[RMDB]
RNA sequence: GGGAACGACUCGAGUAGAGUCGAAAAGCACUGUAAUGGGAUGGGAUCCGAAGCCCCAUUGAGGGAUAAUACAGGCUCUCCCAUCCAACUCCUAUUCCAACACGUCCUCGUCGUACAGAGUGGUAACUAAGGUAUAGCUCCUUCGGGAGCUAUACAACCCUACAGGAUACUUCGGUAUCCUGUAGGGAAAAGAAACAACAACAACAAC
Reactivity to 2A3 in 0.01 (KOAc 150mM, MgCl2 10mM, bicine 150mM(pH8.5), 24C), signal-to-noise 1, nucleotides 027 to 156: g070c020a040c100u060g000u210a050a140u100g000g000g000a000u010g000g000g000a060u130c050c020g050a040a040g030c070c010c000c010a160u190u210g040a210g010g010g010a010u040a220a090u070a120c170a060g000g010c060u060c010u050c030c000c000a000u000c000c000a000a000c000u000c000c000u040a040u000u050c030c040a140a040c010a020c050g020u010c010c010u030c030g050u050c010g000u010a050c080a000g010a040g090u050g110g000u110a100a030c010u030a190a110g130g000u000a000u020a000g000c010u030c000c010u050u020c030g060g020g000a010g040c000u000a000u000a000c000a030a000

Notes
The data come from the RNA Mapping Database (RMDB), library M2RFPK. An RNA of 207 nucleotides, treated with 2A3 and read out base by base. The RNA was probed in 150 mM KOAc, 10 mM MgCl2 and 150 mM bicine (pH 8.5) at 24 C. Values cover nucleotides 27 to 156.